RNA sequence: GGGAACGACUCGAGUAGAGUCGAAAACAGCUCAUGGACAAUAGGCUUGCUCAGAACCUGGGACUCACUCACUCUGUCCUAAGAUUUGAACUGCACUAAUAACCAGACUCCUCAGUCCCAGAUUUGCAGUUAAGAAACACACACACAGGCCUAGUUCAUCUUAUGUGUUAUUCGUAACACAUAAGAUAAAAGAAACAACAACAACAAC
Reactivity to 2A3 in 0.01 (KOAc 150mM, MgCl2 10mM, bicine 150mM(pH8.5), 24C), signal-to-noise 9, nucleotides 027 to 156: c030a010g050c020u050c070a060u090g020g010a020c020a100a300u030a070g010g000c010u010u030g010c030u050c120a040g040a080a040c010c010u010g000g000g010a010c010u030c070a060c020u080c030a080c030u090c120u060g050u070c010c020u060a110a060g030a170u060u060u130g030a040a020c020u020g020c020a010c060u110a070a090u080a110a050c040c030a020g030a070c040u070c050c020u080c070a010g010u000c000c000c000a020g010a090u070u070u060g010c020a000g000u030u060a090a020g070a060a120a000c070a000c010a000c000a000c000a000c000a080g020g000c000c000u010a020g010u030u030c010
Reactivity to DMS in 0.01 (KOAc 150mM, MgCl2 10mM, bicine 150mM(pH8.5), 24C), signal-to-noise 6, nucleotides 027 to 156: c020a080g010c020u000c040a140u010g020g020a080c050a090a130u000a040g020g020c020u000u010g020c020u000c050a230g010a030a040c020c000u020g010g000g020a040c010u000c030a060c060u010c070a060c070u000c040u010g000u000c010c020u000a060a080g010a150u000u000u010g000a060a070c010u000g000c020a140c170u000a070a110u000a100a130c070c040a100g010a060c030u000c040c030u010c050a090g000u000c010c000c010a080g010a090u000u000u000g020c020a080g020u000u000a070a120g010a120a060a080c070a120c100a070c090a110c080a060c030a030g010g010c010c020u000a070g010u000u000c040

An RNA of 207 nucleotides, treated with 2A3 and DMS and read out base by base. The data come from the RNA Mapping Database (RMDB), library OK3TST. For DMS the reverse transcriptase was MarathonRT. The DMS profile rests on 15,057 reads. Conditions: 150 mM KOAc, 10 mM MgCl2 and 150 mM bicine (pH 8.5), 24 C.